An RNA of 177 nucleotides, treated with DMS and 2A3 and read out base by base. The reactions ran in a buffer of 150 mM KOAc, 10 mM MgCl2 and 150 mM bicine (pH 8.5), at 24 C.
[RMDB]
RNA sequence: GGGAACGACUCGAGUAGAGUCGAAAACUUUGCCAGGCGCAUAAAAGCUCAAACUUGCAGGCAUAGCGGUCAUACCAUUGAUAGACGAAGGGAUCUCCCAAUGAGCCGCCAUUCGUUACCUGCGCACUCAUCCAUAGUGCUUCGGCACUAUGGAUGAAAAAGAAACAACAACAACAAC
Reactivity to DMS in 0.01 (KOAc 150mM, MgCl2 10mM, bicine 150mM(pH8.5), 24C), signal-to-noise 2, nucleotides 027 to 126: c040u000u030u020g010c060c000a010g050g010c020g010c080a060u030a050a050a080a100g010c090u000c090a070a040a090c090u010u050g010c030a060g010g000c120a090u020a080g000c020g020g000u020c040a060u050a250c140c120a080u040u010g000a070u000a020g020a030c000g020a050a020g010g030g000a070u070c050u000c020c030c040a080a050u030g000a050g000c030c050g000c010c090a060u000u010c060g000u000u010a090c000c000u000g010c020g000c060a040c300
Reactivity to 2A3 in 0.01 (KOAc 150mM, MgCl2 10mM, bicine 150mM(pH8.5), 24C), signal-to-noise 6, nucleotides 027 to 126: c010u050u090u080g020c000c000a050g030g010c030g000c040a060u160a180a170a050a030g010c020u030c150a110a120a130c080u120u180g010c070a030g030g000c050a030u080a040g020c010g030g000u020c030a070u080a200c060c000a040u010u090g030a030u050a050g050a020c050g060a090a060g120g010g040a080u000c010u020c060c020c010a010a060u120g030a020g010c000c060g000c030c040a090u110u090c020g060u050u060a060c000c000u030g010c030g000c050a050c040